RNA sequence: GGGAACGACUCGAGUAGAGUCGAAAAAGCGAUGUGCGAAGCGGGCAUGUGCGCGAUGGGUGACCGUCGAAGACAUGAAACUCCAGACGGCACAAGGCGCCGACUAAGCGCUCUGCUAAGUCCGCUACUCACUGACCUGGUUCGCCAGGUCAGUGAGAAAAGAAACAACAACAACAAC
Reactivity to 2A3 in 0.01 (KOAc 150mM, MgCl2 10mM, bicine 150mM(pH8.5), 24C), signal-to-noise 1, nucleotides 027 to 126: a050g000c030g000a040u100g040u040g090c030g040a000a010g010c000g020g030g000c010a010u090g010u060g000c100g020c020g120a060u060g020g000g020u030g050a290c040c000g010u030c020g120a140a070g010a010c010a010u070g130a160a070a000c030u090c010c000a050g040a170c040g000g020c000a000c000a010a060g160g020c210g000c000c000g040a110c020u080a070a030g010c000g000c030u010c100u130g010c010u040a040a010g030u000c030c040g000c050u080a060
Reactivity to DMS in 0.01 (KOAc 150mM, MgCl2 10mM, bicine 150mM(pH8.5), 24C), signal-to-noise 1, nucleotides 027 to 126: a020g060c020g000a110u000g020u010g020c000g010a260a110g000c010g000g000g010c010a100u000g010u000g020c080g000c020g000a260u000g010g000g020u000g020a160c100c050g020u000c010g000a110a130g020a030c050a110u000g030a150a100a040c060u030c000c000a300g020a040c040g000g020c050a000c020a010a060g000g020c010g020c020c020g000a050c080u050a060a290g000c050g010c020u000c040u040g040c030u000a150a130g000u000c020c020g010c060u030a130